[RMDB]
Annotation
Chemical mapping of a 177-nucleotide RNA with DMS and 2A3. The RNA was probed in 150 mM KOAc, 10 mM MgCl2 and 150 mM bicine (pH 8.5) at 24 C. The DMS profile rests on 10,667 reads. The data come from the RNA Mapping Database (RMDB), library OK2TST.
RNA sequence: GGGAACGACUCGAGUAGAGUCGAAAACUCACAUCUGUAAGAACCGUCAUGACACCUAAUUUGUUAUUAUCACGAUCUUUGAUAAGUUUUUUAGUGUAAAUAAGAUCAACAGUGGUGCCAUCUGGCACUGAAAAGCAUUCUUCGGAAUGCUUUUCAGAAAAGAAACAACAACAACAAC
Reactivity to DMS in 0.01 (KOAc 150mM, MgCl2 10mM, bicine 150mM(pH8.5), 24C), signal-to-noise 8, nucleotides 027 to 126: c030u000c030a140c120a090u010c050u000g020u010a070a080g010a080a080c080c060g000u000c070a060u000g010a050c040a060c060c050u010a070a100u000u010u010g010u000u000a090u000u000a050u010c030a040c090g010a020u000c020u000u000u000g000a070u000a010a050g010u000u010u010u000u010u000a100g010u010g000u000a050a070a070u000a030a030g010a030u000c030a090a070c220a060g010u000g010g010u000g000c000c010a130u010c170u010g010g000c050a070
Reactivity to 2A3 in 0.01 (KOAc 150mM, MgCl2 10mM, bicine 150mM(pH8.5), 24C), signal-to-noise 6, nucleotides 027 to 126: c010u040c020a050c000a090u080c070u110g080u130a080a050g020a120a070c040c020g070u060c030a050u050g020a020c000a030c020c030u070a120a120u060u090u130g080u030u090a090u050u040a050u120c010a010c100g010a030u010c020u010u040u030g070a080u110a100a110g050u050u060u020u040u080u220a110g020u070g010u050a030a050a050u070a020a020g010a030u030c020a000a040c030a040g100u080g080g020u010g020c020c000a090u100c120u180g010g010c000a010
Notes:
For 2A3 the reverse transcriptase was SuperScript II with manganese.